This 177-nucleotide RNA was probed chemically with 2A3 and DMS.
It was measured as part of the RMDB library OK2TRN.

RNA sequence: GGGAACGACUCGAGUAGAGUCGAAAAUCAGAGCCCAUGAUAGCCAGGUUACCCACUUGUGGACUUCCUUGACCACUUAAUUGAGUCAAUCUAACCCUCACCUUCUCUCUCCUCUCACUCCAUUUAGUGAAAGAUCAACAUUCGUGUUGAUCUUUCAAAAAGAAACAACAACAACAAC
Reactivity to 2A3 in 0.01 (KOAc 150mM, MgCl2 10mM, bicine 150mM(pH8.5), 24C), signal-to-noise 1, nucleotides 027 to 126: u120c020a010g030a020g040c020c010c000a030u110g050a100u060a040g030c040c050a020g020g030u030u100a070c020c010c000a080c050u130u070g050u060g070g020a030c010u050u030c020c000u030u080g050a050c010c000a110c090u060u120a060a070u190u090g030a010g030u010c030a010a120u010c020u090a090a100c030c010c000u030c020a050c000c000u040u000c020u000c000u000c000u030c000c020u030c000u010c010a030c020u030c000c010a060u110u100u120a060g000
Reactivity to DMS in 0.01 (KOAc 150mM, MgCl2 10mM, bicine 150mM(pH8.5), 24C), signal-to-noise 4, nucleotides 027 to 126: u000c070a080g010a190g000c040c010c030a090u010g010a080u010a070g000c040c060a070g000g000u000u010a120c040c020c000a090c120u000u010g030u000g000g000a120c060u000u010c050c050u000u000g020a090c030c030a070c100u000u010a100a110u000u010g000a100g020u000c040a070a110u000c070u010a100a180c070c010c010u000c050a060c030c010u000u000c020u000c020u000c030u000c020c010u000c020u000c060a060c060u000c020c050a090u010u000u010a140g000
Conditions: 150 mM KOAc, 10 mM MgCl2 and 150 mM bicine (pH 8.5), 24 C.